Structure probing data (2A3 and DMS) for a 177-nucleotide construct. High DMS reactivity at an A or C suggests that its Watson-Crick edge is free. For DMS the reverse transcriptase was MarathonRT. The reactions ran in a buffer of 150 mM KOAc, 10 mM MgCl2 and 150 mM bicine (pH 8.5), at 24 C. 2A3 adducts were read by reverse transcription with SuperScript II with manganese.
RNA sequence: GGGAACGACUCGAGUAGAGUCGAAAAGGGCAUAUCUUCGGAUAUGCCCAAACGUCGAAAAGGAAAAGUCGCUUGCGUCGAUCGAACAACGUCGCAUGCGACAAACUCGGAGGUUCGCCUCCGAGAAUCCUUGUGUACAGUUCGCUGUACACAAGGAAAAAGAAACAACAACAACAAC
Reactivity to 2A3 in 0.01 (KOAc 150mM, MgCl2 10mM, bicine 150mM(pH8.5), 24C), signal-to-noise 1, nucleotides 027 to 126: g020g000g000c000a000u020a010u010c010u030u030c120g010g030a000u000a000u000g000c010c010c000a000a000a000c020g130u070c060g010a050a000a000a050g070g030a030a110a010a050g000u000c000g010c000u000u030g020c000g030u030c000g090a130u090c100g060a070a040c040a070a050c080g010u000c000g020c010a000u020g000c010g000a000c010a000a000a000c000u000c000g010g000a010g000g000u010u040c250g080c020c000u000c040c000g000a000g000a000a020
Reactivity to DMS in 0.01 (KOAc 150mM, MgCl2 10mM, bicine 150mM(pH8.5), 24C), signal-to-noise 2, nucleotides 027 to 126: g010g020g000c000a010u000a010u000c000u000u000c160g050g010a010u000a000u010g000c000c000c000a010a020a010c140g010u000c030g020a030a080a040a030g020g000a090a080a130a090g000u000c000g000c020u000u000g010c000g010u000c000g010a070u000c120g000a140a180c210a100a060c010g010u000c000g000c010a000u000g010c010g000a000c000a010a030a070c010u000c000g000g000a000g010g000u000u010c210g030c000c000u000c000c010g010a000g010a110a060